Source: RMDB library M2PK50, as collected in RNAgym. Structure probing data (2A3 and DMS) for a 177-nucleotide construct.
[RMDB]
RNA sequence: GGGAACGACUCGAGUAGAGUCGAAAAAGACAUACGUUCGCGUAUGUCUGACGGGCACCUGACCCUAAGGAAAUGGUCUAUGACAGGACACACUGAUUGUGAUACCUCGAGAUUUCGAUCUCGAGAAUUCUACUGAUUCUUUCGAGAAUCAGUAGAAAAAAGAAACAACAACAACAAC
Reactivity to 2A3 in 0.01 (KOAc 150mM, MgCl2 10mM, bicine 150mM(pH8.5), 24C), signal-to-noise 5, nucleotides 027 to 126: a000g010a000c000a000u010a000c000g020u020u080c260g000c010g110u020a000u000g020u010c000u000g000a020c020g020g010g020c020a030c070c040u070g120a180c000c000c020u040a070a040g090g040a070a070a110u180g060g010u040c040u060a110u120g090a050c020a030g010g060a030c020a000c000a000c090u110g120a260u210u110g060u050g080a050u090a130c000c000u010c000g010a010g000a010u050u080u130c230g040a010u030c000u000c010g000a010g000a000a020
Reactivity to DMS in 0.01 (KOAc 150mM, MgCl2 10mM, bicine 150mM(pH8.5), 24C), signal-to-noise 9, nucleotides 027 to 126: a020g000a010c000a000u000a000c010g010u000u020c210g040c010g030u000a010u000g000u000c000u000g000a090c190g010g010g010c070a070c050c030u000g000a190c010c010c020u020a090a110g010g000a060a090a100u020g010g010u000c020u010a060u000g010a110c100a080g000g000a110c040a070c050a060c080u010g000a110u010u010g010u000g010a170u000a110c170c000u000c000g010a010g000a020u000u000u020c170g000a020u000c000u000c000g000a010g000a050a070
DMS adducts were read by reverse transcription with MarathonRT. The DMS profile rests on 12,398 reads. 2A3 adducts were read by reverse transcription with SuperScript II with manganese.